[RMDB]
RNA sequence: GGGAACGACUCGAGUAGAGUCGAAAAGAUAUGGACCGUCGGUUGUCACAAUGAUGUCGGAAACGAUUGAGUGACUGCCGAGCGGUCCUAAGUCAAACGAAGCGAAUCGUUCGCGAUUCGCUUCGAACUUCCUAAAAGACUUCGGUCUUUUAGGAAGAAAAGAAACAACAACAACAAC
Reactivity to DMS in 0.01 (KOAc 150mM, MgCl2 10mM, bicine 150mM(pH8.5), 24C), signal-to-noise 4, nucleotides 027 to 126: g010a050u000a300u000g000g000a000c000c000g020u000c000g000g030u000u000g000u000c010a020c010a170a180u010g000a110u010g000u000c010g010g010a120a100a210c010g010a010u000u010g000a130g030u000g000a010c000u000g000c010c000g000a040g010c020g010g030u000c000c000u000a010a050g010u000c040a060a110a250c020g000a020a020g010c000g000a020a010u000c000g010u010u010c260g010c010g000a020u000u000c000g000c000u020u000c000g000a040a150
Reactivity to 2A3 in 0.01 (KOAc 150mM, MgCl2 10mM, bicine 150mM(pH8.5), 24C), signal-to-noise 3, nucleotides 027 to 126: g020a030u080a060u180g000g000a000c000c020g030u050c010g020g000u020u020g000u020c010a010c020a110a300u250g100a050u150g040u030c000g030g040a050a050a080c030g020a010u030u090g040a020g010u000g000a000c020u020g010c010c010g020a020g020c010g000g000u000c000c000u010a000a000g020u010c010a020a030a090c040g000a020a000g020c000g000a010a010u010c000g020u110u140c290g030c000g100a010u000u000c000g010c010u010u010c000g000a000a010